[RMDB]
RNA sequence: GGGAACGACUCGAGUAGAGUCGAAAACCAGGGGGAGUGUGAUCCAGGUACCGCCGUAGAAACUGGAUUACGACGCCUACCCGGGAUUCAAACCCGGUCCCCCUCAGAGGUGACUCUGAGUGAAAGGUCUGUGCUUAGCACACUGAUGAGUUCCUGAACAUCGUUAAGUGUUCGCACUUAACGAUGUAAAAGAAACAACAACAACAAC
Reactivity to 2A3 in 0.01 (KOAc 150mM, MgCl2 10mM, bicine 150mM(pH8.5), 24C), signal-to-noise 1, nucleotides 027 to 156: c040c010a030g030g020g000g000g000a130g150u090g000u000g030a010u020c010c000a000g040g040u070a090c070c120g140c070c060g120u200a020g130a040a260a030c000u010g010g000a010u000u030a000c070g040a000c020g060c030c000u020a060c020c000c000g020g000g010a100u250u210c150a110a090a190c000c000c000g000g000u030c000c000c000c000c000u000c000a010g000a020g000g030u070g030a060c000u000c040u010g010a010g010u040g040a110a020a020g060g000u030c080u050g010u030g000c020u130u170a050g000c020a010c000a020c070u060g060a110u080g040a120g070u000u010c000c000u020g020a020
Reactivity to DMS in 0.01 (KOAc 150mM, MgCl2 10mM, bicine 150mM(pH8.5), 24C), signal-to-noise 1, nucleotides 027 to 156: c010c000a150g000g010g050g000g060a110g040u010g000u000g050a000u000c010c030a000g030g000u020a110c150c040g030c080c260g020u000a120g000a090a110a180c020u000g000g050a140u000u000a010c020g020a030c010g000c130c040u010a090c050c000c010g030g000g010a090u000u020c150a090a200a100c030c020c020g020g000u000c000c010c000c010c010u000c030a020g010a030g050g020u010g000a300c000u010c000u010g010a060g000u000g020a130a180a150g010g010u010c020u000g040u010g010c000u010u000a180g020c040a080c020a050c020u000g000a090u000g000a300g020u010u000c010c000u000g020a300